[RMDB]
RNA sequence: GGGAACGACUCGAGUAGAGUCGAAAAUGAAAUAGCACUUCUUCGCUUCGUGUAUUUUUACUAUGGUUAAUUAUCACAUAGCGCAAACGGUCAUUUGUGUAUCACUAUUCAUAAGAUUAACUAUUUAUCUACAUAAGUAAUUCGUUACUUAUGUAGAAAAAGAAACAACAACAACAAC
Reactivity to DMS in 0.01 (KOAc 150mM, MgCl2 10mM, bicine 150mM(pH8.5), 24C), signal-to-noise 8, nucleotides 027 to 126: u010g010a050a060a070u010a060g010c070a060c070u000u000c060u010u000c060g000c030u000u010c110g020u000g000u010a020u010u010u020u010u000a050c050u020a100u010g010g010u010u000a020a030u000u010a070u000c070a060c060a070u000a030g010c020g000c140a040a040a080c120g020g010u010c070a110u000u000u000g020u010g020u010a060u010c090a090c040u000a040u010u000c060a070u020a070a100g000a090u000u020a050a070c030u000a070u000u000u000a110
Reactivity to 2A3 in 0.01 (KOAc 150mM, MgCl2 10mM, bicine 150mM(pH8.5), 24C), signal-to-noise 9, nucleotides 027 to 126: u110g030a020a020a030u080a020g020c020a010c050u060u020c000u070u060c050g020c030u040u040c090g020u010g030u040a160u020u090u010u050u070a060c060u040a070u110g050g010u060u050a060a030u090u090a090u130c020a010c010a080u040a020g000c020g000c030a020a050a040c060g090g060u070c070a080u020u080u070g040u010g020u030a050u120c030a020c070u050a070u100u060c030a060u060a180a040g030a100u090u080a060a020c010u040a110u090u090u030a110
Source: RMDB libraries RFM100 and RFMREP, as collected in RNAgym. Structure probing data (DMS and 2A3) for a 177-nucleotide construct. For 2A3 the reverse transcriptase was SuperScript II with manganese. The RNA was probed in 150 mM KOAc, 10 mM MgCl2 and 150 mM bicine (pH 8.5) at 24 C.